[RMDB]
RNA sequence: GGGAACGACUCGAGUAGAGUCGAAAAAACAUUAUCUAUGUUAAACAACUUUAAUUUCGAAAAGAUUAUUGAAACCGACCCUAGGUAUGAAUCGGGCACAAGCACUACACUCAACAAGGGCGAAAAGAUGUAUAUUUGCGUGCGACAACGCCCAAUCGUGUCUCUUAGGUUUCGACCUAAGAGACACAAAAGAAACAACAACAACAAC
Reactivity to 2A3 in 0.01 (KOAc 150mM, MgCl2 10mM, bicine 150mM(pH8.5), 24C), signal-to-noise 1, nucleotides 027 to 156: a010a010c130a120u170u080a180u130c130u120a110u070g030u130u140a150a100a080c120a050a020c000u070u120u040a100a100u090u100u080c040g020a000a130a100a030g080a100u050u050a030u100u130g030a160a000a000c000c000g080a130c010c000c000u010a010g010g100u070a040u090g030a030a070u090c100g030g000g060c010a010c000a070a160g050c000a030c060u040a040c060a060c040u180c040a010a100c000a150a090g070g010g020c050g050a120a000a000a000g030a060u150g050u120a120u020a120u050u160u230g050c080g030u000g070c030g020a020c020a030a120c020g000c030c000c010a020a030u050c230
Structure probing data (2A3) for a 207-nucleotide construct. Conditions: 150 mM KOAc, 10 mM MgCl2 and 150 mM bicine (pH 8.5), 24 C.